[RMDB]
RNA sequence: GGGAACGACUCGAGUAGAGUCGAAAACCUUCGGCGCGCCACUUGGCCUUCUCUUUCUAAAUAUUAGCAUAAUAAAUAUAAAUGGACCCAGAACGCGAGGGGGCAGGGGCCACGUGAUCGCUCCACGCAAGGUAAUUAGGUUCGCCUAAUUACCUUGAAAAGAAACAACAACAACAAC
Reactivity to 2A3 in 0.01 (KOAc 150mM, MgCl2 10mM, bicine 150mM(pH8.5), 24C), signal-to-noise 9, nucleotides 027 to 126: c000c000u040u050c040g010g000c020g000c000g010c010c010a030c010u010u010g020g000c010c000u190u130c010u010c000u020u160u010c050u100a140a180a110u160a130u120u090a040g030c010a030u090a220a040u140a110a300a030u170a050u080a070a140a050u110g050g010a030c020c010c010a030g060a210a040c060g040c070g090a120g020g010g000g010g000c020a020g000g020g000g000c000c000a010c020g000u000g010a040u100c000g000c000u000c000c000a030c020g060
Reactivity to DMS in 0.01 (KOAc 150mM, MgCl2 10mM, bicine 150mM(pH8.5), 24C), signal-to-noise 4, nucleotides 027 to 126: c020c010u020u020c060g000g020c080g020c020g000c290c020a040c040u010u000g000g010c010c020u010u030c030u000c050u000u010u010c020u000a030a120a070u010a050u000u020a080g000c010a100u050a090a050u030a070a070a120u000a120u010a050a070a100u010g010g000a080c020c020c030a110g010a090a100c110g020c060g020a090g020g010g010g000g020c100a050g010g000g000g000c020c020a020c050g020u000g000a060u020c040g000c020u010c010c020a110c180g010
Chemical mapping of a 177-nucleotide RNA with 2A3 and DMS.
The data come from the RNA Mapping Database (RMDB), libraries RFM100 and RFMREP.
The reactions ran in a buffer of 150 mM KOAc, 10 mM MgCl2 and 150 mM bicine (pH 8.5), at 24 C.